[RMDB]
RNA sequence: GGGAACGACUCGAGUAGAGUCGAAAAGGAGGAGGAAGCAUAUUUCUGUUUCUGGAGGAUUAUUUAUAAUCUGCCGGAAAGUCUUGCAGGUGGCUGGGAUAUGUUCAGUCUGGUAGAAUUAAGCACGAAAACGUGUCCUUGUUCGCAAGGACACGAACAUUAGUUGAGUCUUCGGACUCAACUAAUGAAAAGAAACAACAACAACAAC
Reactivity to 2A3 in 0.01 (KOAc 150mM, MgCl2 10mM, bicine 150mM(pH8.5), 24C), signal-to-noise 4, nucleotides 027 to 156: g030g000a010g010g010a000g000g030a050a030g050c040a030u060a080u140u170u080c060u050g090u020u020u010c000u020g000g010a020g020g000a000u010u020a020u030u230u020a100u020a060a010u000c010u040g040c000c010g000g050a050a030a020g040u010c060u120u110g020c020a030g020g070u030g030g000c010u020g030g000g000a040u040a010u170g040u020u070c020a010g040u010c030u040g010g010u060a040g040a050a030u130u060a070a040g050c070a030c130g070a020a040a040a040c010g000u000g000u000c000c000u000u020g000u080u060c080g000c100a000a010g000g010a000c000a000c000g000a000a000
Reactivity to DMS in 0.01 (KOAc 150mM, MgCl2 10mM, bicine 150mM(pH8.5), 24C), signal-to-noise 2, nucleotides 027 to 156: g010g010a080g020g020a090g010g010a060a080g000c060a100u000a040u010u010u020c030u000g020u000u000u000c010u000g020g000a030g010g000a020u000u000a030u000u000u000a080u000a070a010u000c010u000g000c000c000g020g000a030a030a070g020u000c040u010u000g010c070a110g030g030u010g020g020c040u000g000g030g000a090u010a040u010g010u010u000c040a130g030u000c020u000g010g020u000a090g010a120a070u000u000a080a140g010c060a100c000g020a100a050a100a180c010g010u000g000u000c000c000u000u000g020u010u000c270g050c020a020a020g000g020a010c000a010c020g010a020a040
Source: RMDB library M2RFPK, as collected in RNAgym. Chemical mapping of a 207-nucleotide RNA with 2A3 and DMS. For DMS the reverse transcriptase was MarathonRT. Conditions: 150 mM KOAc, 10 mM MgCl2 and 150 mM bicine (pH 8.5), 24 C. For 2A3, 3,108 sequencing reads were counted. 2A3 adducts were read by reverse transcription with SuperScript II with manganese.